[RMDB]
RNA sequence: GGGAACGACUCGAGUAGAGUCGAAAAGAGAGGCCACUGUCCCAUAGGAAUAACUGGUGUCCAUUACAUUAAUGACAAGGGCAAGAUAGUGUUGUCGAAGUGUAGCGGUGAGAAUCAUGAAAUAACACCUCACCUAGGAUUUCGAUCCUAGGUGAGGAAAAGAAACAACAACAACAAC
Reactivity to DMS in 0.01 (KOAc 150mM, MgCl2 10mM, bicine 150mM(pH8.5), 24C), signal-to-noise 1, nucleotides 027 to 126: g010a130g010a110g010g000c050c000a010c020u000g010u010c040c010c050a160u000a090g010g050a080a080u000a040a160c070u020g000g030u000g010u000c010c060a180u010u000a090c030a040u020u000a020a090u000g030a050c070a030a110g000g000g010c050a110a030g000a080u010a010g030u000g030u000u000g010u010c070g010a160a090g000u000g010u010a040g010c040g040g020u000g000a060g000a080a070u000c130a130u000g010a080a090a070u030a040a070c170a140
This 177-nucleotide RNA was probed chemically with DMS. Source: RMDB library OK2TST, as collected in RNAgym. Reactivities are given for positions 27 through 126.